[RMDB]
This 177-nucleotide RNA was probed chemically with DMS and 2A3. Values cover nucleotides 27 to 126. Conditions: 150 mM KOAc, 10 mM MgCl2 and 150 mM bicine (pH 8.5), 24 C.
RNA sequence: GGGAACGACUCGAGUAGAGUCGAAAAGUGGCAACGAGUUCGCCACAGGACUCGAACGCUGUGUGCUUCGCUUUACAGCCAGCGAAGUAAGGAUUUCGAAUAGUGUUCAACGGAAUCCGGAACACAAGGCAUCGUUCUCGUUCGCGGGAACGAUGCCAAAAGAAACAACAACAACAAC
Reactivity to DMS in 0.01 (KOAc 150mM, MgCl2 10mM, bicine 150mM(pH8.5), 24C), signal-to-noise 1, nucleotides 027 to 126: g000u080g000g000c000a050a200c020g000a040g030u000u020c080g060c130c140a030c190a140g000g020a050c000u000c000g020a040a210c210g000c000u000g000u000g010u020g000c000u010u000c000g000c020u060u000u050a170c200a080g000c230c210a000g000c000g010a000a000g000u000a090a050g000g000a000u000u000u000c000g000a020a060u000a050g010u020g010u000u000c050a180a210c000g000g000a020a000u000c000c030g010g070a170a080c030a030c030a010a180
Reactivity to 2A3 in 0.01 (KOAc 150mM, MgCl2 10mM, bicine 150mM(pH8.5), 24C), signal-to-noise 3, nucleotides 027 to 126: g150u100g010g000c000a040a050c040g050a030g050u020u000c060g080c070c060a080c000a030g000g010a000c000u010c030g000a040a020c050g020c080u050g030u020g000u010g030c000u000u000c010g020c010u080u150u200a200c060a110g050c140c070a020g000c080g000a000a000g000u010a060a060g030g000a040u010u050u020c030g030a030a060u100a160g190u130g110u280u150c080a030a000c020g000g000a000a000u000c040c000g010g040a130a000c000a000c030a050a070